Chemical mapping of a 177-nucleotide RNA with DMS and 2A3. It was measured as part of the RMDB library OK2TST. 2A3 adducts were read by reverse transcription with SuperScript II with manganese. The DMS profile rests on 35,514 reads.
RNA sequence: GGGAACGACUCGAGUAGAGUCGAAAACAUCACCUCGGUGGCAGGCGAACUGGCGCGCGCCAACGACGCCGUCUAUCCGGCCGCCAAGCAGGGCCUGACCGGCAUGAUGCGCGCCCUGGCCGUGGAAAUCAGGAUUAUUAUUCGUAAUAAUCCUGAUAAAAGAAACAACAACAACAAC
Reactivity to DMS in 0.01 (KOAc 150mM, MgCl2 10mM, bicine 150mM(pH8.5), 24C), signal-to-noise 9, nucleotides 027 to 126: c080a110u010c090a150c040c010u010c060g020g020u000g010g010c050a060g010g010c080g010a080a100c130u010g010g010c040g010c050g020c040g020c030c060a060a110c180g010a130c130g010c010c000g000u000c080u010a140u000c050c050g000g010c010c020g000c060c080a070a090g010c150a110g000g000g010c030c060u010g000a050c150c030g010g000c040a140u010g000a060u000g010c020g000c030g010c010c000c040u000g000g010c010c020g010u010g010g000a080a090
Reactivity to 2A3 in 0.01 (KOAc 150mM, MgCl2 10mM, bicine 150mM(pH8.5), 24C), signal-to-noise 8, nucleotides 027 to 126: c010a060u110c040a050c020c010u020c040g060g010u050g120g050c060a040g050g000c060g060a110a050c070u090g020g000c010g000c000g000c010g010c040c010a050a050c060g140a030c100g000c010c010g020u010c020u040a070u040c010c020g010g010c010c020g140c060c010a040a020g090c050a050g040g000g060c000c020u040g010a040c000c030g010g010c010a020u100g010a040u070g020c010g000c000g000c010c010c010u030g030g000c000c020g010u030g020g050a070a180